An RNA of 207 nucleotides, treated with DMS and 2A3 and read out base by base. The data come from the RNA Mapping Database (RMDB), library RSTRND.
[RMDB]
RNA sequence: GGGAACGACUCGAGUAGAGUCGAAAACGAAUAUUCAGAGAUCAAAUCAUCCAUUCCCGAGUCUAAUAGAUCUUUUGAAGAACCGAUGAAUCGGACGAGAAUAAAGAUAGAGUCCCGUUCUACAUGUCAAUACAGACAACAAUGAAAUUGAUAGUAACGACUUACUAUAGUUCGCUAUAGUAAGUCGAAAAGAAACAACAACAACAAC
Reactivity to DMS in 0.01 (KOAc 150mM, MgCl2 10mM, bicine 150mM(pH8.5), 24C), signal-to-noise 2, nucleotides 027 to 156: c050g000a110a120u000a110u000u000c020a090g020a080g010a110u000c030a140a100a150u000c020a030u000c010c020a130u010u000c030c010c000g000a120g000u000c070u000a100a120u000a150g000a050u000c010u000u000u000u000g010a090a060g000a120a190c050c030g000a180u020g000a080a100u000c080g030g000a050c010g020a130g000a060a140u000a030a080a150g010a150u010a050g040a300g030u000c010c000c000g010u000u010c020u000a090c110a090u000g010u000c000a030a060u010a120c070a090g000a130c030a080a120c300a030a140u010g000a070a070a120u000u010g000a040u000a110g010u000a080a250
Reactivity to 2A3 in 0.01 (KOAc 150mM, MgCl2 10mM, bicine 150mM(pH8.5), 24C), signal-to-noise 6, nucleotides 027 to 156: c030g020a070a040u100a090u090u060c020a010g010a010g000a060u030c040a040a100a100u100c050a050u030c090c030a060u040u050c020c010c010g020a030g050u010c070u150a080a080u080a170g000a030u020c000u030u060u060u070g050a060a020g020a060a040c020c040g070a070u100g050a090a080u080c040g000g010a020c020g030a020g050a180a070u160a130a130a010g090a070u100a040g100a010g020u000c040c020c010g020u000u010c020u030a070c010a080u080g000u010c010a030a040u080a150c040a040g110a040c020a090a020c030a080a120u110g090a110a070a080u120u100g030a050u070a090g070u060a070a050
2A3 adducts were read by reverse transcription with SuperScript II with manganese.